[RMDB]
RNA sequence: GGGAACGACUCGAGUAGAGUCGAAAAGCGCGUUUCCGCUCUGUUUGCUGCUGGCGCUCGACCACUCUGUGCAACCGGCUAUUGCUGGCAAGCUGGUGGCGUUUAUGCAGGGGAUCGGUUUUAUCAACCGAUUACUGACUUUCGAGUCAGUAAUCGGAAAAGAAACAACAACAACAAC
Reactivity to 2A3 in 0.01 (KOAc 150mM, MgCl2 10mM, bicine 150mM(pH8.5), 24C), signal-to-noise 1, nucleotides 027 to 126: g030c040g010c030g040u000u000u010c010c010g060c030u030c040u070g200u060u160u130g010c030u000g000c030u020g040g000c050g010c000u000c010g080a040c040c020a020c020u100c080u060g100u080g030c030a040a030c020c000g000g000c000u070a100u200u300g020c010u000g030g000c020a040a010g000c020u020g000g040u010g050g000c000g000u060u090u090a180u180g000c010a000g000g060g000g000a040u050c010g010g040u020u020u000u110a060u050c070a000a060
Reactivity to DMS in 0.01 (KOAc 150mM, MgCl2 10mM, bicine 150mM(pH8.5), 24C), signal-to-noise 2, nucleotides 027 to 126: g020c100g030c060g020u000u000u000c060c030g030c080u000c090u000g020u000u010u010g030c020u000g000c030u010g000g000c020g000c030u000c060g000a120c060c030a060c040u010c060u010g010u010g020c050a130a100c020c030g020g000c020u030a090u000u010g030c020u000g010g020c070a070a090g020c050u000g010g010u000g020g020c010g010u020u000u010a080u020g000c030a040g010g010g000g000a060u000c060g000g000u000u000u000u020a070u010c210a110a120
An RNA of 177 nucleotides, treated with 2A3 and DMS and read out base by base.
2A3 adducts were read by reverse transcription with SuperScript II with manganese.
It was measured as part of the RMDB library OK2TST.
High 2A3 reactivity points to a flexible backbone, as in loops and unpaired stretches.